[RMDB]
The data come from the RNA Mapping Database (RMDB), library OK1LIB.
The record gives the reactivity of an RNA of 177 nucleotides to DMS and 2A3.
RNA sequence: GGGAACGACUCGAGUAGAGUCGAAAAGGUAGGUACUGCCCAAUCGAGGCAACGAGUGCGCCUCAAAUACCAGUACUCGAAAGAUCUCGGAAUGCCACAUAGAGAUCAAGGUAUUCCAGGGCAGAAAGGGUAGGAAGAUGUUCGCAUCUUCCUACCCAAAAGAAACAACAACAACAAC
Reactivity to DMS in 0.01 (KOAc 150mM, MgCl2 10mM, bicine 150mM(pH8.5), 24C), signal-to-noise 1, nucleotides 027 to 126: g070g000u010a000g000g000u000a100c020u000g000c000c010c010a210a000u070c150g000a000g000g000c070a050a150c060g000a070g060u050g010c240g010c000c060u030c000a070a100a050u020a140c000c030a220g000u000a020c050u000c000g000a090a160a090g070a020u000c000u000c000g000g000a050a010u000g020c050c120a290c120a130u000a170g000a020g050a120u050c010a000a090g000g000u000a010u050u000c040c050a120g000g000g000c000a000g000a120a090a070
Reactivity to 2A3 in 0.01 (KOAc 150mM, MgCl2 10mM, bicine 150mM(pH8.5), 24C), signal-to-noise 1, nucleotides 027 to 126: g050g030u090a000g110g000u060a030c020u020g030c020c000c010a020a050u210c150g020a010g000g000c010a150a000c120g000a010g100u040g030c000g000c000c000u020c010a090a080a000u090a000c010c010a010g010u010a030c020u020c060g100a190a050a020g060a040u000c000u000c000g000g000a040a000u100g060c010c000a110c000a030u140a010g060a000g000a050u060c100a030a050g020g000u010a030u000u000c030c010a000g020g000g000c000a020g020a040a020a000
For 2A3, 1,289 sequencing reads were counted. For 2A3 the reverse transcriptase was SuperScript II with manganese. For DMS the reverse transcriptase was MarathonRT. The reactions ran in a buffer of 150 mM KOAc, 10 mM MgCl2 and 150 mM bicine (pH 8.5), at 24 C.